Chemical mapping of a 177-nucleotide RNA with 2A3 and DMS.
For DMS the reverse transcriptase was MarathonRT.
The RNA was probed in 150 mM KOAc, 10 mM MgCl2 and 150 mM bicine (pH 8.5) at 24 C.
For DMS, 1,392 sequencing reads were counted.
2A3 adducts were read by reverse transcription with SuperScript II with manganese.
RNA sequence: GGGAACGACUCGAGUAGAGUCGAAAAUGGCUCAAUGCGGAGGUGGGGGUAGGACCGCAUGAUACGGGAAUGUAGGGCUCUGACUGGGUGUUUGCUGUGGUAUACUUCUUCAGCACUGCGCCGCAAAUGGUCCAUUUGAGUUCGCUCAAAUGGACCAAAAAGAAACAACAACAACAAC
Reactivity to 2A3 in 0.01 (KOAc 150mM, MgCl2 10mM, bicine 150mM(pH8.5), 24C), signal-to-noise 1, nucleotides 027 to 126: u040g050g000c000u050c040a050a030u140g020c000g020g030a050g050g030u120g000g060g000g010g010u000a020g000g080a030c000c000g060c000a000u080g000a030u100a130c050g020g000g040a040a040u070g020u100a100g020g000g070c020u040c070u060g060a080c030u090g020g040g000u020g040u000u060u070g050c080u000g000u040g000g000u100a130u000a140c070u040u130c000u000u000c000a000g000c040a090c040u000g080c030g000c010c000g020c050a000a100a100
Reactivity to DMS in 0.01 (KOAc 150mM, MgCl2 10mM, bicine 150mM(pH8.5), 24C), signal-to-noise 1, nucleotides 027 to 126: u030g010g070c000u000c010a090a070u020g000c030g000g030a100g000g020u000g060g000g000g000g060u000a090g000g010a120c000c060g090c090a050u020g000a180u010a010c070g000g000g000a110a090u000g020u000a090g000g000g000c080u010c060u040g010a090c110u010g000g000g020u010g060u000u000u000g000c060u000g030u000g000g000u000a210u000a040c220u000u000c040u010u000c000a080g010c010a030c210u000g000c090g060c030c020g020c170a030a070a000